About this RNA
Structure probing data (DMS and 2A3) for a 177-nucleotide construct.
[RMDB]
RNA sequence: GGGAACGACUCGAGUAGAGUCGAAAAGAGUAGUAGUUCGCUACUACUCAAAGGCACAAAAGGCACAGUACUAAAGUGCAUGGAACACGCCAAGUGCCCGUGAAAGUAAAUCCUUCGGGAUUUACAACACUGAGAUCUACUUCGGUAGAUCUCAGUGAAAAGAAACAACAACAACAAC
Reactivity to DMS in 0.01 (KOAc 150mM, MgCl2 10mM, bicine 150mM(pH8.5), 24C), signal-to-noise 2, nucleotides 027 to 126: g010a000g020u000a010g010u000a000g010u000u010c220g070c020u000a000c000u000a010c000u000c000a000a030a100g010g040c030a050c030a060a110a120a110g030g000c020a050c050a100g010u040a170c210u010a090a080a120g010u000g000c010a070u000g010g010a120a160c130a050c100g030c050c010a130a200g000u010g010c010c010c050g000u000g010a070a050a170g000u000a000a010a000u000c000c000u000u000c180g050g000g010a010u000u000u000a000c000a090a180
Reactivity to 2A3 in 0.01 (KOAc 150mM, MgCl2 10mM, bicine 150mM(pH8.5), 24C), signal-to-noise 2, nucleotides 027 to 126: g000a000g010u010a000g000u010a000g000u020u060c180g000c120u000a000c000u000a000c000u010c000a010a020a030g020g030c010a010c030a050a130a020a080g030g000c000a000c020a050g150u200a070c090u250a140a190a100g020u030g000c000a020u080g010g040a070a050c080a000c080g020c020c000a050a080g030u000g010c000c020c000g070u060g090a200a000a000g010u000a010a000a010u010c000c000u040u080c240g030g000g000a000u030u000u000a000c000a010a000
For 2A3, 2,657 sequencing reads were counted. Conditions: 150 mM KOAc, 10 mM MgCl2 and 150 mM bicine (pH 8.5), 24 C. Source: RMDB library M2PK50, as collected in RNAgym.